[RMDB]
RNA sequence: GGGAACGACUCGAGUAGAGUCGAAAAAGUGGGAGAAUUUUGUUUGGAGCUGCAGGUGUUGGGGGGUGGCACGUCUCAGGCUUUGGGGUCUUCCUGUUCUCUUUCUUGGCCCUGCUCCACUCCUUGGGUAUGAGCAAAGGUUCGCCUUUGCUCAUACAAAAGAAACAACAACAACAAC
Reactivity to DMS in 0.01 (KOAc 150mM, MgCl2 10mM, bicine 150mM(pH8.5), 24C), signal-to-noise 1, nucleotides 027 to 126: a070g020u000g010g010g000a090g000a080a080u000u010u020u020g010u000u010u010g020g000a060g020c050u000g020c110a020g010g010u000g020u010u000g000g000g000g000g000g000u000g010g010c080a040c100g000u000c040u000c130a120g000g010c070u000u010u010g000g010g000g020u010c010u000u000c020c010u010g000u000u000c020u010c020u010u000u020c040u000u000g010g010c050c010c020u000g010c070u000c020c030a040c090u000c020c010u010u020g020g000
About this RNA
The record gives the reactivity of an RNA of 177 nucleotides to DMS. Conditions: 150 mM KOAc, 10 mM MgCl2 and 150 mM bicine (pH 8.5), 24 C.